[RMDB]
RNA sequence: GGGAACGACUCGAGUAGAGUCGAAAAGAUAUGGACAGUUCCAGUCUACCCACCCUGAACUUUCGAUGAAAUUUAUCGGAAACGAUAAAUGGAGAAACCCCAGGAGGACUGGAACUGUCCUAAGUCAGUUAAACAAGGUGUUCGCACCUUGUUUAACAAAAGAAACAACAACAACAAC
Reactivity to DMS in 0.01 (KOAc 150mM, MgCl2 10mM, bicine 150mM(pH8.5), 24C), signal-to-noise 2, nucleotides 027 to 126: g000a080u010a300u030g000g000a000c020a000g040u000u010c000c010a040g010u000c000u010a110c050c140c200a300c080c000c010u020g020a060a120c300u000u000u000c010g000a110u000g040a160a120a030u000u000u000a000u000c000g020g000a120a140a120c000g030a000u030a000a030a010u000g000g010a080g030a000a040a030c180c170c070c040a020g020g000a240g000g000a010c000u010g000g000a010a010c000u000g000u000c000c000u000a010a030g000u020c060a190